Structure probing data (DMS) for a 177-nucleotide construct.
For DMS the reverse transcriptase was MarathonRT.
The reactions ran in a buffer of 150 mM KOAc, 10 mM MgCl2 and 150 mM bicine (pH 8.5), at 24 C.
RNA sequence: GGGAACGACUCGAGUAGAGUCGAAAACAGUUAUGUGCGUCCCUCCCGAAGCUGCGCGCUCGGUCGAAGAGGAGGACCAUCGCCGAUAGAGGACGACCGGUCUUCGGUCAAGGGAAUAAGAGUAAAAUCUUUUGCAAGAGUUCGCUCUUGCAAAAGAAAAAGAAACAACAACAACAAC
Reactivity to DMS in 0.01 (KOAc 150mM, MgCl2 10mM, bicine 150mM(pH8.5), 24C), signal-to-noise 1, nucleotides 027 to 126: c090a130g010u010u020a110u010g000u000g000c130g000u000c040c000c000u010c040c000c000g000a080a040g030c030u000g050c130g010c090g010c010u010c020g010g030u000c050g000a060a180g000a090g010g010a130g000g030a050c050c040a150u000c050g040c070c000g000a060u000a210g010a100g010g000a070c030g010a040c100c060g000g010u000c010u000u010c020g000g010u010c090a090a080g000g000g010a090a020u010a060a110g000a180g010u000a050a050a110a170